This 177-nucleotide RNA was probed chemically with DMS. For DMS, 662 sequencing reads were counted. The reactions ran in a buffer of 150 mM KOAc, 10 mM MgCl2 and 150 mM bicine (pH 8.5), at 24 C.
[RMDB]
RNA sequence: GGGAACGACUCGAGUAGAGUCGAAAAGUCGCCUCCUUCGGGAGGCGACAAAUACAGAGACUACGCAACUCUGAAAUACACAACAAAAGUGUAAAAGCGUAGAAACAUCCACGUUCGCGUGGAUGAAUCUAGAAUCGAUGUUCGCAUCGAUUCUAGAAAAAGAAACAACAACAACAAC
Reactivity to DMS in 0.01 (KOAc 150mM, MgCl2 10mM, bicine 150mM(pH8.5), 24C), signal-to-noise 1, nucleotides 027 to 126: g010u000c010g000c000c000u020c000c000u000u060c170g000g020g000a000g010g010c000g010a000c000a010a020a020u000a260c020a040g000a020g000a150c000u000a000c000g000c020a080a090c000u000c020u000g050a100a190a200u000a000c050a020c010a020a110c300a060a100a220a140g010u000g020u000a000a080a020a140g000c000g050u010a000g000a220a100a130c000a000u000c010c000a000c000g000u000u010c240g000c000g030u000g000g000a000u000g000a010a030